[RMDB]
RNA sequence: GGGAACGACUCGAGUAGAGUCGAAAACGCGUACGAUACGUCGUACGCGAAGCAUAGAACAGCGCUAUCAUGUAUUAUAGUUCUAUGCAACUAUAGCGCUAAACGCCGUAGUUACGACUACGGCGAACCAGGGUGCCAGGUUCGCCUGGCACCCUGGAAAAGAAACAACAACAACAAC
Reactivity to 2A3 in 0.01 (KOAc 150mM, MgCl2 10mM, bicine 150mM(pH8.5), 24C), signal-to-noise 2, nucleotides 027 to 126: c000g010c000g000u000a000c000g000a020u000a020c300g100u000c000g000u000a000c000g020c000g000a010a010g000c000a000u060a130g050a020a010c000a170g020c000g000c040u010a080u150c090a080u210g080u100a070u190u110a080u230a140g070u070u010c030u030a080u060g050c010a000a000c040u020a000u020a120g000c040g000c060u020a080a120a070c000g000c000c000g000u000a000g000u000u180a200c300g000a020c030u000a000c000g000g000c000g000a000a020